An RNA of 207 nucleotides, treated with DMS and 2A3 and read out base by base. Conditions: 150 mM KOAc, 10 mM MgCl2 and 150 mM bicine (pH 8.5), 24 C. For DMS, 5,055 sequencing reads were counted. The data come from the RNA Mapping Database (RMDB), library OK3TST.

[RMDB]
RNA sequence: GGGAACGACUCGAGUAGAGUCGAAAACACCCAGGAUGUCAAUACACAUGACUUAAGGGAGCAAAGAUGGUUCUGGCACCACCAAGAACCUUUCUCCUGAAGUAACUAGCCAACCUGGAAAAAGUCUCCCUCAGUUGGAAGAAAGCUAUUUGAGAAACAGUUGAAGGUAAUUCGUUACCUUCAACUGAAAAGAAACAACAACAACAAC
Reactivity to DMS in 0.01 (KOAc 150mM, MgCl2 10mM, bicine 150mM(pH8.5), 24C), signal-to-noise 4, nucleotides 027 to 156: c060a170c080c010c000a090g020g010a190u010g000u000c030a090a180u010a170c070a130c110a170u010g010a070c000u000u000a080a300g050g010g020a070g010c200a150a070a160g010a100u000g030g020u000u000c020u000g020g000c080a170c250c130a160c020c010a040a080g000a010a030c010c000u000u000u010c000u000c010c000u000g020a090a150g040u000a080a090c050u000a100g020c010c020a070a180c010c010u000g000g010a050a040a100a080a150g010u000c030u010c010c000c000u010c020a270g000u010u000g020g040a070a040g000a060a100a080g010c050u010a080u010u000u000g020a170g000a210a110a270
Reactivity to 2A3 in 0.01 (KOAc 150mM, MgCl2 10mM, bicine 150mM(pH8.5), 24C), signal-to-noise 3, nucleotides 027 to 156: c080a030c000c000c010a000g010g030a050u100g030u080c010a050a010u190a190c110a020c020a160u210g030a060c010u070u120a090a050g020g020g010a000g000c080a080a030a030g130a190u190g040g000u010u000c000u020g030g000c120a060c090c000a020c020c000a090a080g000a000a030c000c000u000u030u010c000u000c000c000u010g000a010a000g010u020a080a110c080u050a070g070c010c020a000a020c010c000u010g000g010a000a020a050a040a100g050u020c040u010c010c020c000u060c040a050g000u080u060g040g040a070a060g040a070a110a040g070c050u070a150u270u180u270g190a120g060a140a040a010